[RMDB]
RNA sequence: GGGAACGACUCGAGUAGAGUCGAAAAGAUAUGGACGCGAGGAUCUAGGACGUACAACAGCUCGGAAACGAGACAUGUACGGUACUAGGGAGCGUCCUAAGUCAAAAGUGGUGGUUCGCCACCACAAUCAAAGGGCGUACUUCGGUACGCCCUUUGAAAAAGAAACAACAACAACAAC
Reactivity to DMS in 0.01 (KOAc 150mM, MgCl2 10mM, bicine 150mM(pH8.5), 24C), signal-to-noise 1, nucleotides 027 to 126: g010a040u000a300u010g000g010a000c010g000c020g020a110g050g000a010u010c020u000a000g000g030a120c070g000u010a000c000a020a070c240a130g000c000u010c000g000g000a090a110a170c020g000a020g000a040c070a070u000g000u000a000c010g010g010u000a080c000u010a010g000g020g000a030g010c010g000u000c000c000u000a000a030g000u000c020a080a120a130a070g000u000g000g000u000g000g010u000u000c260g010c000c000a010c000c000a000c000a080a100

The record gives the reactivity of an RNA of 177 nucleotides to DMS. In probing experiments dimethyl sulfate is read out at A N1 and C N3, which are open when not base-paired. The reactions ran in a buffer of 150 mM KOAc, 10 mM MgCl2 and 150 mM bicine (pH 8.5), at 24 C.